[RMDB]
RNA sequence: GGGAACGACUCGAGUAGAGUCGAAAAUCGGGUGCAACGAUCGGGCCAUGCCUGACGGGGAGCAGAGCCAGCCACCGGCCCAAGAAGAUGCGGAAGACGACUCGCGGCCCGACGCCGCGGAGGCCGCGACGACCUCGACUUUCGAGUCGAGGUCGUCAAAAGAAACAACAACAACAAC
Reactivity to 2A3 in 0.01 (KOAc 150mM, MgCl2 10mM, bicine 150mM(pH8.5), 24C), signal-to-noise 2, nucleotides 027 to 126: u080c040g020g010g030u080g000c000a020a090c050g120a150u070c010g010g060g000c000c060a080u190g010c010c000u030g020a030c010g030g040g000g060a080g020c030a020g000a010g090c030c010a010g030c000c010a020c000c020g050g000c000c010c010a000a020g060a050a010g080a040u150g030c040g010g020a010a050g110a060c120g050a090c020u010c050g060c010g010g000c010c140c000g080a030c070g020c020c010g010c020g030g000a010g030g000c000c000g000c070
Reactivity to DMS in 0.01 (KOAc 150mM, MgCl2 10mM, bicine 150mM(pH8.5), 24C), signal-to-noise 1, nucleotides 027 to 126: u000c020g000g010g050u000g000c120a040a010c230g000a070u040c000g000g060g000c000c100a100u130g010c000c040u000g010a020c080g040g020g000g000a180g040c110a040g010a220g040c040c000a130g010c050c000a060c010c030g000g030c000c040c000a060a010g000a220a080g040a020u050g040c000g030g010a090a030g000a040c110g000a270c070u000c010g000c000g000g000c010c020c180g010a130c090g000c010c080g000c050g000g010a010g060g000c020c000g000c040
This 177-nucleotide RNA was probed chemically with 2A3 and DMS. For DMS the reverse transcriptase was MarathonRT. Source: RMDB library OK1LIB, as collected in RNAgym.